RNA sequence: GGGAACGACUCGAGUAGAGUCGAAAAAGCGAAACAUACAGGAACAGGGUUUGGGGUUGGUAUCAAGACGUAUUUUUAACGCGUCUUCAUAACGACAGUAAGCAAUUAAUGUUAUUUACAAGGUGGCACGAAGACGAUUUAGCGGGGCGAAUACUUGCGUUAUACUUCGUUUCGACGAAGUAUAACGAAAAGAAACAACAACAACAAC
Reactivity to DMS in 0.01 (KOAc 150mM, MgCl2 10mM, bicine 150mM(pH8.5), 24C), signal-to-noise 3, nucleotides 027 to 156: a150g000c030g010a130a140a060c060a160u010a120c060a110g020g020a080a110c050a110g010g030g030u000u000u010g020g020g000g030u000u000g000g010u010a040u000c050a050a020g020a020c020g060u010a010u000u000u000u010u010a040a060c080g030c000g030u000c000u000u000c070a040u010a050a090c010g010a030c030a100g000u010a020a090g010c060a030a130u000u000a060a060u010g000u010u000a090u010u000u000a120c060a050a050g030g030u000g010g000c030a080c060g000a090a110g010a060c040g000a130u020u000u000a090g020c020g000g000g040g020c060g010a050a050u000a070c050u000u010g010
Reactivity to 2A3 in 0.01 (KOAc 150mM, MgCl2 10mM, bicine 150mM(pH8.5), 24C), signal-to-noise 6, nucleotides 027 to 156: a000g110c070g050a070a040a010c060a060u250a040c050a060g060g030a070a030c030a070g000g040g060u060u060u070g030g030g020g020u020u030g010g020u050a050u060c030a010a010g010a000c000g050u050a120u070u230u020u080u190a080a030c070g000c000g010u000c000u020u020c030a030u040a080a020c030g020a000c010a010g050u080a070a010g020c030a020a060u040u080a160a040u140g030u050u080a120u070u150u060a080c040a030a040g040g000u020g040g020c010a010c060g000a020a010g010a010c070g000a020u080u090u050a020g000c040g000g020g020g010c020g050a040a060u080a100c010u040u050g030